[RMDB]
The record gives the reactivity of an RNA of 177 nucleotides to 2A3 and DMS.
RNA sequence: GGGAACGACUCGAGUAGAGUCGAAAAGCAUACUAUUCGCCUCCGCCCUGGUAGGUUUGGAUGUUGCCGCAACUGAACGUUCAAUUCCAAAUUUGUUGAGUGUUUGCGCGUGUGUAAUGUGGCGAGGAAAUACGCCCUAUUUCGAUAGGGCGUAUUUAAAAGAAACAACAACAACAAC
Reactivity to 2A3 in 0.01 (KOAc 150mM, MgCl2 10mM, bicine 150mM(pH8.5), 24C), signal-to-noise 3, nucleotides 027 to 126: g040c010a060u100a130c040u130a170u090u070c020g030c030c000u000c010c030g020c000c020c000u070g080g040u130a100g060g000u060u050u100g070g000a060u090g020u050u080g060c020c010g010c010a030a050c040u100g030a040a010c010g030u020u000c010a020a030u120u140c060c080a080a120a140u170u190u210g090u030u040g020a050g050u050g030u030u030u060g010c030g010c020g000u070g000u020g030u060a070a100u090g030u060g050g020c030g010a020g020g090
Reactivity to DMS in 0.01 (KOAc 150mM, MgCl2 10mM, bicine 150mM(pH8.5), 24C), signal-to-noise 7, nucleotides 027 to 126: g010c060a060u040a050c070u020a070u030u020c050g010c020c010u010c050c040g010c040c000c020u020g020g020u020a070g010g010u000u000u000g000g000a050u010g010u000u010g020c090c020g000c030a070a300c140u020g000a050a040c030g010u000u010c020a040a040u010u010c070c070a050a090a140u030u010u010g010u010u000g010a080g010u000g010u010u000u000g020c040g000c130g020u000g000u010g010u020a030a070u010g010u000g000g020c020g010a080g000g000
Notes: The data come from the RNA Mapping Database (RMDB), library OK1LIB. The RNA was probed in 150 mM KOAc, 10 mM MgCl2 and 150 mM bicine (pH 8.5) at 24 C.